Description: Source: RMDB library OK3TST, as collected in RNAgym. Chemical mapping of a 207-nucleotide RNA with 2A3. The RNA was probed in 150 mM KOAc, 10 mM MgCl2 and 150 mM bicine (pH 8.5) at 24 C. The 2A3 profile rests on 362 reads. High 2A3 reactivity points to a flexible backbone, as in loops and unpaired stretches.
[RMDB]
RNA sequence: GGGAACGACUCGAGUAGAGUCGAAAAUAGGUUAUGCGUAUUGGGUCUGCACAACAUUGCAAGAUAAAAGCAACAGAGAAACAGAGCUGUACCAGUACAACAUCCUCCAGAUGAAUGCUAUUCCAGCAGCACAAGUUAUUUUGAAUAAAUAUGUAGGAGGGAAUUGUACUUUCGAGUACAAUUCCCUAAAAGAAACAACAACAACAAC
Reactivity to 2A3 in 0.01 (KOAc 150mM, MgCl2 10mM, bicine 150mM(pH8.5), 24C), signal-to-noise 1, nucleotides 027 to 156: u120a000g030g000u030u000a000u160g000c090g050u030a030u070u030g090g000g020u000c040u080g000c040a000c000a030a030c000a150u130u260g000c090a090a060g040a220u240a080a140a000a000g030c000a000a030c000a030g020a030g030a030a150a000c080a030g060a030g000c030u000g030u010a020c000c000a000g000u050a000c010a010a000c050a110u050c000c070u120c030c000a030g080a070u040g110a140a000u090g010c000u040a090u130u210c140c050a030g000c000a010g030c000a040c000a110a030g050u050u030a180u070u180u080u120g000a000a110u240a110a080a120u220a110u240g000u020a040g050g080